[RMDB]
Structure probing data (2A3 and DMS) for a 177-nucleotide construct.

RNA sequence: GGGAACGACUCGAGUAGAGUCGAAAAGUAGCUUCAACUCGGGACCUCUCACUGUCCCCCAGCACUACGGCUACCAAGGAGUGUGGUCAUCCUCAUGGACAACACCUCUACUUGCGCCUACGCCUAAAACCGGUCAUAUUUUCGAAUAUGACCGGUUAAAAGAAACAACAACAACAAC
Reactivity to 2A3 in 0.01 (KOAc 150mM, MgCl2 10mM, bicine 150mM(pH8.5), 24C), signal-to-noise 2, nucleotides 027 to 126: g010u020a020g000c030u080u100c050a030a060c020u040c050g000g020g000a030c010c040u100c020u020c140a060c110u060g090u150c040c000c000c000c040a010g050c010a030c040u110a040c050g020g000c010u040a070c030c020a080a060g090g000a060g010u140g000u010g040g020u120c020a070u030c020c020u160c100a130u270g020g060a010c020a050a000c010a100c010c000u040c000u030a090c020u040u000g060c000g020c000c060u060a050c040g080c090c000u130a140a200
Reactivity to DMS in 0.01 (KOAc 150mM, MgCl2 10mM, bicine 150mM(pH8.5), 24C), signal-to-noise 3, nucleotides 027 to 126: g040u000a060g030c020u000u000c080a030a070c060u010c140g000g010g020a050c050c080u010c090u000c080a100c170u000g000u010c010c000c010c080c080a060g010c090a050c060u000a090c210g010g010c010u000a050c050c030a070a060g010g000a040g030u020g030u010g000g000u010c140a150u000c020c040u010c170a110u000g020g000a020c040a050a090c040a030c020c040u000c000u000a070c040u000u000g010c110g000c020c000u000a140c170g000c020c010u000a070a040
Record summary
Values cover nucleotides 27 to 126.